The record gives the reactivity of an RNA of 177 nucleotides to DMS and 2A3. The data come from the RNA Mapping Database (RMDB), library OK2TRN. For DMS the reverse transcriptase was MarathonRT. Values cover nucleotides 27 to 126.
RNA sequence: GGGAACGACUCGAGUAGAGUCGAAAACGUGACGUCGUGCAAAACCAUCUGCUGCAGGUGCUGGCGCUGGUGACGAUGGAACCGCCGGUCGGUUCCAGCGCCGAUGACCUCAACGACAAGAAGGCCGACGCAAAAGACGAUUCGUCGUCUUUUGCGUAAAAGAAACAACAACAACAAC
Reactivity to DMS in 0.01 (KOAc 150mM, MgCl2 10mM, bicine 150mM(pH8.5), 24C), signal-to-noise 2, nucleotides 027 to 126: c070g000u000g000a120c070g000u000c020g010u000g010c040a070a030a070a140c080c040a090u000c020u000g020c060u000g000c150a060g010g010u000g020c020u000g000g000c020g000c010u020g000g000u000g000a040c060g000a060u000g020g010a070a070c120c080g010c050c170g030g010u010c000g000g010u000u000c000c010a000g010c000g020c000c000g010a140u000g000a070c000c000u000c050a070a060c060g010a050c080a040a090g010a070a100g000g030c010c020g000
Reactivity to 2A3 in 0.01 (KOAc 150mM, MgCl2 10mM, bicine 150mM(pH8.5), 24C), signal-to-noise 2, nucleotides 027 to 126: c110g090u070g070a020c020g030u030c000g020u030g060c040a010a010a050a090c040c010a110u030c020u150g060c010u130g060c100a000g040g010u070g100c000u030g030g040c020g040c010u010g030g070u030g010a050c050g030a030u020g060g040a050a160c030c030g040c090c030g160g040u120c010g000g040u060u040c000c000a000g020c000g010c000c000g050a200u070g050a030c000c000u030c000a030a010c020g040a050c000a040a070g040a050a010g050g000c040c010g000